[RMDB]
RNA sequence: GGGAACGACUCGAGUAGAGUCGAAAAUAUCCUCGUUUCGACGAGGAUAACAGAAAACUCAUGCCAAAUAAUACGCUGACAGGCAUGAGAAAAGUCAGCGAAACAUACGGGUCUUCGGACCCGUAAACUUAAUGUUCUAGUUCGCUAGAACAUUAAGAAAAGAAACAACAACAACAAC
Reactivity to DMS in 0.01 (KOAc 150mM, MgCl2 10mM, bicine 150mM(pH8.5), 24C), signal-to-noise 5, nucleotides 027 to 126: u010a010u000c000c000u000c000g010u000u000u010c200g020a020c000g000a010g020g010a000u000a010a090c150a120g000a120a050a100a090c000u000c010a020u000g000c000c010a130a110a120u000a070a130u000a090c060g010c000u000g000a010c030a080g000g000c000a000u010g000a010g000a030a030a070a110g000u000c000a010g020c010g020a170a110a100c200a140u000a010c010g000g000g000u010c000u000u020c210g030g010a010c000c000c000g000u000a000a020a100
Reactivity to 2A3 in 0.01 (KOAc 150mM, MgCl2 10mM, bicine 150mM(pH8.5), 24C), signal-to-noise 3, nucleotides 027 to 126: u040a000u000c000c000u000c000g010u010u050u070c180g080a020c000g000a010g010g000a000u010a010a000c000a020g160a030a100a000a010c010u010c000a000u010g000c000c010a190a230a000u160a060a030u080a150c060g000c000u010g010a000c000a040g010g000c000a010u010g000a000g010a000a070a000a000g000u000c000a000g000c000g050a070a050a030c030a000u080a020c010g000g000g000u000c000u020u060c120g100g020a000c010c010c000g000u010a010a000a000
Record summary
An RNA of 177 nucleotides, treated with DMS and 2A3 and read out base by base. For 2A3, 6,632 sequencing reads were counted. Reactivities are given for positions 27 through 126. DMS adducts were read by reverse transcription with MarathonRT.